This 177-nucleotide RNA was probed chemically with 2A3 and DMS. DMS adducts were read by reverse transcription with MarathonRT. Reactivities are given for positions 27 through 126. The reactions ran in a buffer of 150 mM KOAc, 10 mM MgCl2 and 150 mM bicine (pH 8.5), at 24 C.
RNA sequence: GGGAACGACUCGAGUAGAGUCGAAAACAAGAGGCAACCAUAGGAGAGAAUGGAGUAUUGCAUGGGUCGGAGAUCAGGUCAAAGUCUUCGAGUGGUGUAAUCCCAGGUGUGCCCCAGUCACGGCCUCGCAUGCUGUAUGCUUCGGCAUACAGCAUGCAAAAGAAACAACAACAACAAC
Reactivity to 2A3 in 0.01 (KOAc 150mM, MgCl2 10mM, bicine 150mM(pH8.5), 24C), signal-to-noise 2, nucleotides 027 to 126: c050a040a020g020a010g000g000c000a000a050c040c000a110u150a130g020g070a100g010a000g000a000a070u050g000g030a020g010u230a040u040u030g000c010a030u020g100g070g140u010c000g000g010a000g000a020u050c020a030g130g150u120c050a050a100a040g000u000c000u000u000c020g040a110g190u160g100g000u040g000u000a020a030u000c030c010c000a000g000g020u020g020u080g050c020c000c010c010a020g050u150c010a010c100g030g030c000c000u020c060
Reactivity to DMS in 0.01 (KOAc 150mM, MgCl2 10mM, bicine 150mM(pH8.5), 24C), signal-to-noise 2, nucleotides 027 to 126: c040a110a190g020a040g010g010c020a090a100c040c080a060u150a300g000g000a130g000a000g000a100a060u010g000g000a130g130u030a000u020u020g020c050a080u000g000g000g000u010c000g000g010a000g000a040u190c080a080g000g140u010c260a080a120a060g020u010c000u000u000c000g000a060g000u020g030g040u010g000u010a060a070u020c040c020c020a010g060g000u040g110u060g000c020c000c020c030a080g000u000c060a160c150g020g000c020c010u000c040